[RMDB]
RNA sequence: GGGAACGACUCGAGUAGAGUCGAAAAAUCUGCUGGAUCAUCUCCCAAAGUGUUGGGAUUACAGGUGUGAGCCACCAUGCCUGGCCUGGUAUUUUGUAUUCUUUAUUUUUUUUUGCUGAUCAGACUGCUGCCGUCCAUAUUUCGAUAUGGACGGCAGAAAAGAAACAACAACAACAAC
Reactivity to 2A3 in 0.01 (KOAc 150mM, MgCl2 10mM, bicine 150mM(pH8.5), 24C), signal-to-noise 1, nucleotides 027 to 126: a070u040c010u080g000c010u060g060g000a050u060c000a060u020c040u000c060c000c000a040a000a110g030u000g060u060u040g070g030g000a100u000u260a080c000a030g000g000u000g000u020g020a060g040c000c060a030c020c020a010u030g000c010c000u020g010g010c020c000u010g010g000u060a120u070u100u070u040g130u110a130u130u030c020u010u260u060a210u110u040u010u060u010u030u000u090u300g030c030u000g000a060u060c000a010g010a100c030u080g000
This 177-nucleotide RNA was probed chemically with 2A3. The 2A3 profile rests on 439 reads. Values cover nucleotides 27 to 126. The data come from the RNA Mapping Database (RMDB), library OK1LIB. The RNA was probed in 150 mM KOAc, 10 mM MgCl2 and 150 mM bicine (pH 8.5) at 24 C.